Source information:
Chemical mapping of a 177-nucleotide RNA with DMS. It was measured as part of the RMDB library TTRDES. For DMS, 943 sequencing reads were counted.

RNA sequence: GGGAACGACUCGAGUAGAGUCGAAAAGAUAUGGAUUGCUAAAGUCGCGAUAAGCUGCAGUCGGAAACGACUGGCAGCUUUUGACGCGAUAUAGCAAUCCUAAGUCAAAACCUGGGUUCGCCCAGGACCUCACAACUGAGUUCGCUCAGUUGUGAGGAAAAGAAACAACAACAACAAC
Reactivity to DMS in 0.01 (KOAc 150mM, MgCl2 10mM, bicine 150mM(pH8.5), 24C), signal-to-noise 1, nucleotides 027 to 126: g000a070u000a300u010g000g000a010u000u000g000c000u000a050a130a290g020u000c000g040c000g080a180u010a040a020g010c010u000g000c010a010g000u000c000g000g020a100a120a120c000g010a000c000u000g000g010c000a010g010c010u060u000u000u000g010a230c050g010c000g000a010u010a060u000a000g000c000a010a010u000c000c010u000a000a100g000u000c020a170a040a060a150c000c000u000g010g010g000u000u020c300g010c000c000c010a020g000g000a040